[RMDB]
Chemical mapping of a 170-nucleotide RNA with DMS and 2A3. For 2A3, 59,467 sequencing reads were counted. Values cover nucleotides 27 to 129. The DMS profile rests on 165,498 reads. Conditions: 150 mM KOAc, 10 mM MgCl2 and 150 mM bicine (pH 8.5), 24 C.
RNA sequence: GGGAACGACUCGAGUAGAGUCGAAAACCUUCUCUCGUCUUCCUCGGUCAACCUCUUGAGUUCCCCUUCUUCCUCCUCGCUGAGGCGCUUCCCUCCUGCGGAGAGCUGCUUCUUCUUGUUCUCGAGGUAAUGUACGGAUUCGUCCGUACAAAAAGAAACAACAACAACAAC
Reactivity to DMS in 0.01 (KOAc 150mM, MgCl2 10mM, bicine 150mM(pH8.5), 24C), signal-to-noise 9, nucleotides 027 to 129: c030c010u020u010c050u000c000u030c030g020u000c010u020u030c030c010u000c060g010g000u030c110a060a100c070c000u000c030u010u010g030a130g020u010u010c010c010c010c040u020u010c040u000u010c010c020u000c000c010u020c030g000c060u010g000a120g000g000c070g010c040u010u000c000c000c000u030c060c050u040g010c100g000g000a070g000a040g040c070u010g000c090u020u020c000u000u020c050u000u040g000u020u020c030u010c020g000a060g000g010u000a060a100
Reactivity to 2A3 in 0.01 (KOAc 150mM, MgCl2 10mM, bicine 150mM(pH8.5), 24C), signal-to-noise 9, nucleotides 027 to 129: c000c000u090u020c040u010c010u010c030g050u020c030u120u020c010c000u010c010g020g020u050c030a030a070c010c000u030c000u060u100g060a030g050u030u020c000c000c000c000u040u030c000u040u010c010c010u010c000c000u010c010g000c050u040g010a010g020g000c010g020c010u020u030c000c000c000u080c010c020u110g130c100g030g030a070g000a010g080c060u090g030c000u070u030c000u060u020c010u060u080g050u050u020c030u000c020g020a040g030g020u100a110a070